[RMDB]
RNA sequence: GGGAACGACUCGAGUAGAGUCGAAAACGGUAGUAAAAAUAUCUUUCAGGAAGUAAACACAUCAGGAGCGAUAGCGGUGAAUUAUUCGUGGUUUUGUCGAUUCGGCAUAGUGGCGAUAACUGAAUGCUUAGCAGCUAACUUUCGAGUUAGCUGCUAAAAAAGAAACAACAACAACAAC
Reactivity to 2A3 in 0.01 (KOAc 150mM, MgCl2 10mM, bicine 150mM(pH8.5), 24C), signal-to-noise 3, nucleotides 027 to 126: c020g050g030u100a050g050u080a100a000a000a030a100u060a020u040c000u000u040u070c030a020g010g040a080a000g020u190a090a150a070c080a010c010a070u090c020a030g040g000a030g020c020g060a060u130a040g000c050g030g030u030g080a110a060u190u050a060u050u240c070g010u040g110g000u060u030u000u030g030u000c060g100a180u060u130c010g010g000c010a000u010a080g010u010g000g070c000g020a020u020a070a030c030u050g050a100a010u120g010c010
Reactivity to DMS in 0.01 (KOAc 150mM, MgCl2 10mM, bicine 150mM(pH8.5), 24C), signal-to-noise 3, nucleotides 027 to 126: c080g010g010u020a030g000u010a010a070a050a100a060u030a020u010c030u010u010u000c070a050g010g020a070a090g000u010a040a130a110c060a080c060a050u030c060a090g000g000a050g020c060g010a030u000a040g000c080g080g020u010g000a050a060u020u010a090u010u020c060g000u000g000g000u000u000u010u030g030u000c020g010a160u020u000c060g010g020c050a030u010a070g030u020g000g020c010g000a020u040a070a090c080u030g000a050a060u000g010c170